The record gives the reactivity of an RNA of 177 nucleotides to 2A3 and DMS. Source: RMDB library OK1LIB, as collected in RNAgym. For DMS, 1,860 sequencing reads were counted. In probing experiments dimethyl sulfate is read out at A N1 and C N3, which are open when not base-paired. Values cover nucleotides 27 to 126. For DMS the reverse transcriptase was MarathonRT. Conditions: 150 mM KOAc, 10 mM MgCl2 and 150 mM bicine (pH 8.5), 24 C.

[RMDB]
RNA sequence: GGGAACGACUCGAGUAGAGUCGAAAAUAAAUAUUUAGAUGAAAACGUAAUACCUGAGCUAUAUUGUUCAGGAUAUCCUCUAAAGUGACGAUAUAGAAUAGCGAUUAAUAUCGCGAUAGUUAAUGCGCAACUCCGACAUUUUCGAAUGUCGGAGUUGAAAAGAAACAACAACAACAAC
Reactivity to 2A3 in 0.01 (KOAc 150mM, MgCl2 10mM, bicine 150mM(pH8.5), 24C), signal-to-noise 2, nucleotides 027 to 126: u110a070a060a010u280a010u000u040u000a060g000a050u070g150a000a130a130a000c110g090u200a040a010u050a100c000c000u040g000a000g000c000u070a030u190a270u300u300g000u000u000c000a000g030g000a000u000a050u020c000c000u020c000u000a020a020a020g160u080g090a030c120g000a060u070a000u160a280g250a220a100u050a140g000c000g000a000u020u030a210a130u090a030u110c000g000c000g010a010u010a000g000u040u190a000a000u200g150c120g000
Reactivity to DMS in 0.01 (KOAc 150mM, MgCl2 10mM, bicine 150mM(pH8.5), 24C), signal-to-noise 1, nucleotides 027 to 126: u020a040a140a020u010a090u000u000u000a090g000a100u000g000a030a070a110a110c160g000u070a120a040u000a120c000c020u000g000a010g000c000u010a100u000a090u030u000g020u000u000c000a040g000g000a010u040a020u000c060c030u000c000u030a020a000a020g000u010g000a110c100g010a060u010a020u040a080g010a020a060u000a110g030c020g020a080u000u000a070a120u020a050u000c000g000c000g020a010u030a050g000u030u020a090a060u000g000c180g000